[RMDB]
An RNA of 177 nucleotides, treated with 2A3 and read out base by base. 2A3 adducts were read by reverse transcription with SuperScript II with manganese. The reactions ran in a buffer of 150 mM KOAc, 10 mM MgCl2 and 150 mM bicine (pH 8.5), at 24 C. The 2A3 profile rests on 723 reads. It was measured as part of the RMDB library OK1LIB.

RNA sequence: GGGAACGACUCGAGUAGAGUCGAAAAGGCAAUGAUAGGAGGGCAGGUGACCUUGGAAAACAGUGCCCUAAGAUUGCUUCUUCUAUGCCACGAUUCUCCAAUCGUAGCCUCAUACUCGCCUAUCACGCAUACCCGUGCGCUUCGGCGCACGGGUAUGAAAAGAAACAACAACAACAAC
Reactivity to 2A3 in 0.01 (KOAc 150mM, MgCl2 10mM, bicine 150mM(pH8.5), 24C), signal-to-noise 2, nucleotides 027 to 126: g020g030c000a060a000u080g030a060u090a000g050g080a050g050g010g000c060a020g000g040u000g100a050c030c040u080u090g090g100a140a000a000a080c060a000g050u000g070c000c010c040u000a040a000g090a100u000u140g060c000u020u050c050u110u020c020u060a100u210g100c050c000a010c030g000a000u070u000c070u000c030c010a050a040u090c060g020u040a030g030c020c000u080c020a120u130a190c000u050c020g030c000c020u100a070u110c030a000c070g010